RNA sequence: GGGAACGACUCGAGUAGAGUCGAAAAGGACAACGCUUCGGCGUUGUCCAAACGCUCAACCUCAGAGCGCAAGACUCGAACGAAUACAGUUCGACAUGAGGAAAAUCUCCCUCUUCGGAGGGAGAAACAUAAAAAACUGGUUCGCCAGUUUUUUAUGAAAAGAAACAACAACAACAAC
Reactivity to DMS in 0.01 (KOAc 150mM, MgCl2 10mM, bicine 150mM(pH8.5), 24C), signal-to-noise 3, nucleotides 027 to 126: g010g000a010c000a010a010c010g040c000u000u010c200g030g030c000g020u000u000g010u010c000c000a000a040a150c020g000c000u000c000a080a080c020c000u000c010a040g000a010g020c010g000c130a100a070g010a070c180u000c000g000a030a020c000g010a170a080u020a200c180a140g000u000u000c010g010a020c270a050u000g000a020g000g010a130a070a100a140u000c000u000c000c000c000u000c000u000u010c130g020g010a030g020g000g010a010g000a000a030a060
Reactivity to 2A3 in 0.01 (KOAc 150mM, MgCl2 10mM, bicine 150mM(pH8.5), 24C), signal-to-noise 2, nucleotides 027 to 126: g000g000a020c020a010a000c020g040c050u100u130c280g100g000c000g000u010u010g010u000c000c000a010a000a000c000g000c000u000c010a090a100c010c000u000c000a000g000a000g000c040g030c090a050a060g060a130c050u010c020g000a010a000c030g030a080a040u270a160c080a090g010u020u000c000g000a000c030a070u030g000a000g000g000a000a000a050a090u000c000u010c000c020c000u000c020u020u060c170g090g010a000g000g000g000a000g000a000a000a000